[RMDB]
Notes: An RNA of 177 nucleotides, treated with 2A3 and read out base by base.
RNA sequence: GGGAACGACUCGAGUAGAGUCGAAAACGGCGGCGCGAUCACGGCGCUCGAGUGGAGUGGCGGCGGAGACCGGCUGUUCGUCGGAGACGCUUCAGGUCUCGUCGUCGUGCUCUCGCAGGCCCUCAACCGGUCAGGCACGUUUCGACGUGCCUGACCGAAAAGAAACAACAACAACAAC
Reactivity to 2A3 in 0.01 (KOAc 150mM, MgCl2 10mM, bicine 150mM(pH8.5), 24C), signal-to-noise 1, nucleotides 027 to 126: c000g020g000c000g110g040c000g000c090g080a090u250c070a010c010g010g050c040g030c090u070c020g070a110g020u110g090g100a170g010u090g020g020c100g000g000c010g010g040a100g030a000c010c030g060g000c060u200g050u170u140c050g000u000c070g020g110a290g000a010c000g000c020u070u010c020a090g060g000u010c000u000c000g050u010c000g000u000c000g000u000g030c000u000c000u000c000g000c020a130g160g000c040c080c000u010c050a150a120c140